[RMDB]
RNA sequence: GGGAACGACUCGAGUAGAGUCGAAAAGAAAGAAAGUACGUCUGGUGAGGAUAGAAAAAGGACAGGUUUCGCUAAAAUACUAGCCGAACGCCAACAUGUAGAGACACCUUGGCUGUCUGAGGACGAAUAACGAACGUAUAUUCGUAUACGUUCGUUAAAAAGAAACAACAACAACAAC
Reactivity to 2A3 in 0.01 (KOAc 150mM, MgCl2 10mM, bicine 150mM(pH8.5), 24C), signal-to-noise 9, nucleotides 027 to 126: g100a000a090a000g100a030a080a010g070u100a050c030g010u000c020u030g120g070u120g100a050g030g010a010u030a050g090a040a120a010a010a010g050g010a020c060a050g040g020u000u030u040c010g000c020u020a030a050a080a120u230a140c090u020a010g050c080c040g020a030a010c050g010c020c000a020a030c030a080u140g050u160a040g030a010g020a110c010a030c030c000u030u030g050g000c020u010g010u010c010u030g030a030g000g020a010c010g020a050a060
Reactivity to DMS in 0.01 (KOAc 150mM, MgCl2 10mM, bicine 150mM(pH8.5), 24C), signal-to-noise 9, nucleotides 027 to 126: g010a100a090a080g010a100a070a070g010u010a100c040g010u010c020u010g000g010u020g000a150g000g000a050u010a040g000a030a050a050a060a020g000g000a100c120a100g010g000u000u000u010c150g020c020u010a030a080a070a110u040a110c200u010a030g010c060c050g000a020a030c130g020c030c040a040a070c150a090u030g010u020a080g010a130g010a120c140a060c020c040u000u010g000g010c030u010g000u000c010u010g010a060g000g010a030c040g010a100a140